The record gives the reactivity of an RNA of 207 nucleotides to 2A3. Conditions: 150 mM KOAc, 10 mM MgCl2 and 150 mM bicine (pH 8.5), 24 C. Reactivities are given for positions 27 through 156.

RNA sequence: GGGAACGACUCGAGUAGAGUCGAAAAAGAGCCGGAUACGUCCGGCUCAACGGGGGAUACGUGUGGUGCCGUCCGCUCCCCCUAUGGCAUAACAAAUGCACCACACACUAUGCUACGGCCUAGUGAAAAAAGGUGUAUGUGUUCGCACAUACACCAACUGACGCACUAUGUUCGCAUAGUGCGUCAGAAAAGAAACAACAACAACAAC
Reactivity to 2A3 in 0.01 (KOAc 150mM, MgCl2 10mM, bicine 150mM(pH8.5), 24C), signal-to-noise 2, nucleotides 027 to 156: a000g020a000g020c180c000g000g000a050u020a090c230g090u020c010c000g000g000c000u010c000a010a000c010g000g000g000g000g000a010u020a130c030g070u050g010u000g040g010u000g010c020c010g050u040c020c040g030c050u040c000c000c000c000c020u060a140u140g090g000c080a120u050a190a040c020a050a050a040u100g000c000a010c010c000a000c000a000c000a010c000u000a000u020g010c000u000a040c200g080g000c000c020u000a040g020u040g090a090a000a000a010a050a000g000g000u000g000u000a000u000g000u000g000u020u030c220g020c060a000c000a000u000a000c000a000c000c000a000a000